[RMDB]
The record gives the reactivity of an RNA of 177 nucleotides to 2A3 and DMS.
Source: RMDB library OK2TST, as collected in RNAgym.
RNA sequence: GGGAACGACUCGAGUAGAGUCGAAAAGGCAAGAACAAGAGCAGGAGCUACUGAGCAAGAAGUAAGUGCGUACGUGCUUAGUGAGUUAUACUUAUACUAGCUUGCGGGCGGGCGGGCGCGGCUGCGAGUGAUUAAGCACUUUCGAGUGCUUAAUCACAAAAGAAACAACAACAACAAC
Reactivity to 2A3 in 0.01 (KOAc 150mM, MgCl2 10mM, bicine 150mM(pH8.5), 24C), signal-to-noise 2, nucleotides 027 to 126: g030g000c020a000a070g030a060a070c060a070a060g000a040g020c030a020g010g110a010g000c040u070a030c030u030g030a020g030c010a020a040g070a090a010g060u080a050a030g040u040g090c040g010u050a050c030g030u050g020c030u000u020a020g010u030g160a030g000u080u050a110u020a100c010u100u070a030u020a150c020u000a020g000c000u010u040g000c010g000g030g000c070g040g020g040c090g030g040g030c100g010c020g070g020c010u040g020c030g030a050
Reactivity to DMS in 0.01 (KOAc 150mM, MgCl2 10mM, bicine 150mM(pH8.5), 24C), signal-to-noise 3, nucleotides 027 to 126: g010g000c040a070a030g010a080a060c130a090a110g000a060g010c090a060g020g010a080g020c020u010a090c060u010g000a070g010c000a040a070g010a170a090g010u000a040a040g010u000g010c030g020u000a060c070g010u000g010c020u000u000a030g050u000g010a050g020u010u010a050u010a160c100u000u000a080u010a050c130u010a070g010c020u000u000g020c020g000g000g020c100g000g010g010c110g030g000g000c100g010c060g000g000c080u000g000c070g030a120

Notes: The 2A3 profile rests on 2,531 reads. DMS adducts were read by reverse transcription with MarathonRT.